[RMDB]
Chemical mapping of a 207-nucleotide RNA with DMS and 2A3. For 2A3 the reverse transcriptase was SuperScript II with manganese. For DMS, 1,385 sequencing reads were counted. The reactions ran in a buffer of 150 mM KOAc, 10 mM MgCl2 and 150 mM bicine (pH 8.5), at 24 C.

RNA sequence: GGGAACGACUCGAGUAGAGUCGAAAAUGUAGUCUGCUUCAUCCACUUUGUUCCACAUCGAAUAAGUUUCCCAAUCUUGUGAACAAGGACAAGGAGGGAGUGUUUUAAAGAUACUUCAUGCUGGCAUUGCAAAUCAUUGACUGUAAUGUCAAACAAAAUACCUCGGUAAUUUCGAUUACCGAGGUAUAAAAGAAACAACAACAACAAC
Reactivity to DMS in 0.01 (KOAc 150mM, MgCl2 10mM, bicine 150mM(pH8.5), 24C), signal-to-noise 1, nucleotides 027 to 156: u000g010u000a070g020u000c080u000g010c000u000u000c020a200u000c000c000a300c010u000u000u100g030u010u000c010c020a030c020a050u000c050g000a050a190u000a080a080g000u000u000u000c010c020c010a120a150u000c050u030u010g000u000g010a090a070c050a030a070g010g030a020c030a020a170g000g010a250g000g050g010a020g000u000g030u000u000u000u000a130a150a180g020a140u000a040c050u000u010c020a110u000g030c120u000g000g030c010a060u040u000g010c000a010a090a170u000c040a230u000u010g000a120c160u020g010u050a060a030u010g010u000c000a010a030a040c010a010a070a060
Reactivity to 2A3 in 0.01 (KOAc 150mM, MgCl2 10mM, bicine 150mM(pH8.5), 24C), signal-to-noise 2, nucleotides 027 to 156: u100g000u020a040g070u010c060u070g010c000u020u010c010a040u010c000c010a040c000u000u000u020g020u040u030c140c060a030c020a090u130c100g070a100a070u130a190a080g090u020u070u030c050c030c000a030a050u020c080u070u010g000u050g010a030a020c010a040a010g010g020a070c100a150a130g020g030a000g010g000g000a020g020u000g060u060u150u000u090a110a110a010g040a020u030a120c010u070u080c020a060u130g060c020u030g050g000c010a000u000u000g010c010a050a170a100u120c170a200u030u300g110a060c050u020g010u070a000a010u020g000u000c000a000a030a000c020a000a090a000